[RMDB]
RNA sequence: GGGAACGACUCGAGUAGAGUCGAAAAGCGGCAAAUGCUGGCCCAAUCGUGGCCAGUUCGCCAAGUAUUCUAAUUGGAAGCGUUAACAGGCAGGAAGCGAUUGGCAGUGCAAAUGGAAAUGGAAAUGAGUGGAUUACGGAUUCGUCCGUAAUCCACUAAAAGAAACAACAACAACAAC
Reactivity to DMS in 0.01 (KOAc 150mM, MgCl2 10mM, bicine 150mM(pH8.5), 24C), signal-to-noise 2, nucleotides 027 to 126: g000c140g010g030c080a050a070a050u040g030c000u030g000g030c030c000c030a220a090u090c300g020u050g000g020c000c000a010g000u000u000c140g010c010c000a090a060g000u000a080u000u000c000u000a050a060u000u010g000g020a130a110g010c120g000u000u000a040a010c160a080g040g020c040a090g030g000a040a100g000c030g020a020u000u000g000g000c120a090g000u000g000c100a020a010a070u000g000g000a010a080a080u000g040g000a080a100a110u080g000
Reactivity to 2A3 in 0.01 (KOAc 150mM, MgCl2 10mM, bicine 150mM(pH8.5), 24C), signal-to-noise 3, nucleotides 027 to 126: g140c000g000g020c020a060a060a060u290g020c000u000g020g000c000c000c050a030a090u290c130g220u300g030g010c000c000a020g000u000u050c000g090c020c000a000a000g000u020a180u050u050c090u050a180a160u090u090g080g000a080a050g100c010g060u060u160a150a000c050a040g040g020c010a030g060g030a100a020g070c060g060a150u090u050g040g010c030a030g020u020g070c050a000a030a110u140g000g040a000a030a090u170g100g000a000a070a140u190g020
About this RNA: Source: RMDB library OK1LIB, as collected in RNAgym. The record gives the reactivity of an RNA of 177 nucleotides to DMS and 2A3.